[RMDB]
Structure probing data (DMS and 2A3) for a 177-nucleotide construct. For 2A3 the reverse transcriptase was SuperScript II with manganese. Reactivities are given for positions 27 through 126.
RNA sequence: GGGAACGACUCGAGUAGAGUCGAAAACGGGGUCACUCAGUGCUAUGGGAGAUUCAUGGUCGUGGAGUAAAGGAAGAGCGUGUUCCAUCUAAGUUUAUCACGCCGCUAUUUUUAUCACAGUCAAUAAGCACCUGUACUGGUUCGCUAGUGCAGGUGCAAAAGAAACAACAACAACAAC
Reactivity to DMS in 0.01 (KOAc 150mM, MgCl2 10mM, bicine 150mM(pH8.5), 24C), signal-to-noise 7, nucleotides 027 to 126: c060g000g000g010g000u010c040a060c030u020c070a090g020u020g020c060u010a060u010g010g010g000a060g000a090u020u010c060a060u010g000g010u020c030g020u000g000g000a090g000u020a040a060a070g020g000a070a060g010a120g000c040g010u000g000u010u000c050c030a080u030c090u040a070a080g010u020u010u020a060u020c050a050c040g010c030c030g000c050u020a010u000u000u010u010u010a050u020c070a050c110a080g000u020c070a060a070u030a080a150
Reactivity to 2A3 in 0.01 (KOAc 150mM, MgCl2 10mM, bicine 150mM(pH8.5), 24C), signal-to-noise 4, nucleotides 027 to 126: c010g000g000g010g000u010c000a010c030u040c030a040g030u020g030c000u030a040u040g010g010g010a040g010a090u030u070c010a020u050g000g030u000c030g010u030g030g020a070g030u120a050a040a010g050g020a020a020g020a010g030c060g000u010g030u030u040c010c000a070u040c050u100a100a120g010u030u070u090a120u050c000a010c030g010c020c000g000c020u010a120u030u120u020u060u030a060u070c020a010c020a040g070u040c010a030a070u080a150a010